[RMDB]
RNA sequence: GGGAACGACUCGAGUAGAGUCGAAAAGCGGGAUGUGGGUGCAGAGUGGGAAAAUCUGAGUUCGGUCAUCUUUGUUGUUCGUCCUACCGCAGUAUAUUCCUAAACACUAUGAAAUGACCCUAGUUGGCAUAAUCGGAAAGUUCGCUUUCCGAUUAUGAAAAGAAACAACAACAACAAC
Reactivity to 2A3 in 0.01 (KOAc 150mM, MgCl2 10mM, bicine 150mM(pH8.5), 24C), signal-to-noise 1, nucleotides 027 to 126: g010c030g010g020g020a040u080g090u100g110g000g040u090g050c030a020g020a030g060u100g020g090g020a010a130a050a000u050c010u000g010a000g060u020u030c000g040g050u060c010a020u000c000u000u080u160g050u060u020g020u000u030c020g000u010c000c020u000a030c000c000g000c010a000g020u030a000u030a010u090u020c000c020u030a080a130a030c050a030c060u020a070u140g070a020a060a140u070g030a000c000c000c030u010a050g050u060u110g040g040
Reactivity to DMS in 0.01 (KOAc 150mM, MgCl2 10mM, bicine 150mM(pH8.5), 24C), signal-to-noise 3, nucleotides 027 to 126: g020c040g000g030g010a070u000g020u010g010g010g030u010g010c070a050g010a080g030u000g000g020g000a120a040a110a070u010c010u000g000a070g000u000u010c070g030g000u000c050a030u010c070u010u000u010g010u010u010g010u000u000c040g000u000c020c020u010a070c030c040g000c100a040g010u000a060u010a170u000u000c000c010u010a090a040a100c140a060c090u000a070u010g000a030a070a100u000g010a090c040c020c040u010a070g010u010u000g010g010

The record gives the reactivity of an RNA of 177 nucleotides to 2A3 and DMS. The 2A3 profile rests on 1,012 reads. As a SHAPE reagent, 2A3 marks flexible, mostly unpaired nucleotides at the ribose 2'-OH. Conditions: 150 mM KOAc, 10 mM MgCl2 and 150 mM bicine (pH 8.5), 24 C. It was measured as part of the RMDB library RFMREP. For DMS the reverse transcriptase was MarathonRT.